[RMDB]
RNA sequence: GGGAACGACUCGAGUAGAGUCGAAAAUCUUUUGUCCGUUGCCGACAAGAGAGCACUGUGACUGUCAGCCACUCAAAAAGGAUUCGAAUUUCGAAAUUUCAAGACAUGUAUAGAUGAACGGAUAAAAUCGAUGGGUGACUUUCGAGUCACCCAUCGAAAAAGAAACAACAACAACAAC
Reactivity to 2A3 in 0.01 (KOAc 150mM, MgCl2 10mM, bicine 150mM(pH8.5), 24C), signal-to-noise 1, nucleotides 027 to 126: u100c000u000u000u000u060g060u000c000c040g030u030u130g160c200c030g010a000c000a000a000g060a000g000a030g150c000a000c150u000g000u000g230a060c000u020g040u070c000a000g000c000c010a090c000u150c080a000a000a000a000a000g130g000a030u170u060c130g030a100a200u240u000u090c040g200a000a120a000u080u060u040c050a250a040g070a040c030a130u000g050u150a160u180a200g120a040u070g000a030a000c000g000g000a000u000a010a060a000a000

This 177-nucleotide RNA was probed chemically with 2A3. The 2A3 profile rests on 365 reads. The data come from the RNA Mapping Database (RMDB), library OK1LIB. Values cover nucleotides 27 to 126.